[RMDB]
RNA sequence: GGGAACGACUCGAGUAGAGUCGAAAAUGUGCGCAUCGAACAAUGCUGACCACACCCGAGCAAAUAUCUCUGUCUCGGAUAAUGUGCCACGUUUUACCGUGUGGCCAAUGUCUAUGUCACCUCGUUCUUGGGAUAUGAGCAAGCCCGGCCCGAACGCGUUCCGAGAAAGUUUCGACUUUCUCGGAACAAAAGAAACAACAACAACAAC
Reactivity to 2A3 in 0.01 (KOAc 150mM, MgCl2 10mM, bicine 150mM(pH8.5), 24C), signal-to-noise 2, nucleotides 027 to 156: u050g030u020g010c050g000c020a010u050c070g110a080a070c080a100a050u190g000c050u020g030a060c030c010a000c010a020c060c000c010g000a020g020c030a020a160a140u120a230u140c100u020c030u150g060u100c020u060c020g010g000a010u070a110a020u030g050u060g020c030c000a030c000g000u000u080u130u060a060c050c060g030u010g010u050g020g010c000c000a010a060u070g030u000c020u060a030u070g030u040c030a090c100c000u070c020g060u100u010c000u070u020g040g000g000a010u000a120u090g040a080g030c040a100a010g010c000c010c000g010g010c010c000c000g020a020a040c010g010c020

Chemical mapping of a 207-nucleotide RNA with 2A3. For 2A3, 918 sequencing reads were counted. 2A3 adducts were read by reverse transcription with SuperScript II with manganese. As a SHAPE reagent, 2A3 marks flexible, mostly unpaired nucleotides at the ribose 2'-OH. The RNA was probed in 150 mM KOAc, 10 mM MgCl2 and 150 mM bicine (pH 8.5) at 24 C. Values cover nucleotides 27 to 156.